RNA sequence: GGGAACGACUCGAGUAGAGUCGAAAAUGUGACCGCCAGGUGCUGGGUGCCUGCAUCCAGAAAAGUCAGGUCUACUGCGUCUUUGACGGCAAGCUUGCCCGCAUCAUUCAGGAGCAGGGGCGUCGCGGCUAAGGAAUCGAUUCGUCGAUUCCUUAGCAAAAGAAACAACAACAACAAC
Reactivity to DMS in 0.01 (KOAc 150mM, MgCl2 10mM, bicine 150mM(pH8.5), 24C), signal-to-noise 4, nucleotides 027 to 126: u010g000u000g010a040c000c010g030c070c030a150g030g030u010g000c040u020g000g000g030u010g010c040c080u000g020c010a050u010c020c050a020g000a080a110a110a090g000u010c070a100g040g020u010c010u020a130c050u000g010c170g010u000c020u000u010u030g010a050c030g010g010c030a020a300g000c030u030u000g000c010c000c030g000c100a100u010c130a150u030u000c120a090g010g030a120g010c030a040g010g010g010g000c180g040u000c040g020c170g000
Reactivity to 2A3 in 0.01 (KOAc 150mM, MgCl2 10mM, bicine 150mM(pH8.5), 24C), signal-to-noise 5, nucleotides 027 to 126: u220g030u060g040a050c010c000g000c030c030a060g050g000u080g030c030u080g020g040g000u070g010c000c050u080g020c010a040u030c030c020a020g070a030a070a010a010g100u110c040a030g010g010u000c040u080a130c020u100g040c010g050u020c040u040u090u140g040a070c030g040g010c030a060a020g050c030u120u100g020c020c000c010g010c020a120u110c020a040u190u150c050a060g020g060a060g030c010a020g000g020g020g000c030g000u030c030g000c040g040

An RNA of 177 nucleotides, treated with DMS and 2A3 and read out base by base. High DMS reactivity at an A or C suggests that its Watson-Crick edge is free. Values are in units of 0.01, from 0 to 300, in steps of 10. The 2A3 profile rests on 4,473 reads. The DMS profile rests on 6,084 reads. The data come from the RNA Mapping Database (RMDB), library OK1LIB. The RNA was probed in 150 mM KOAc, 10 mM MgCl2 and 150 mM bicine (pH 8.5) at 24 C.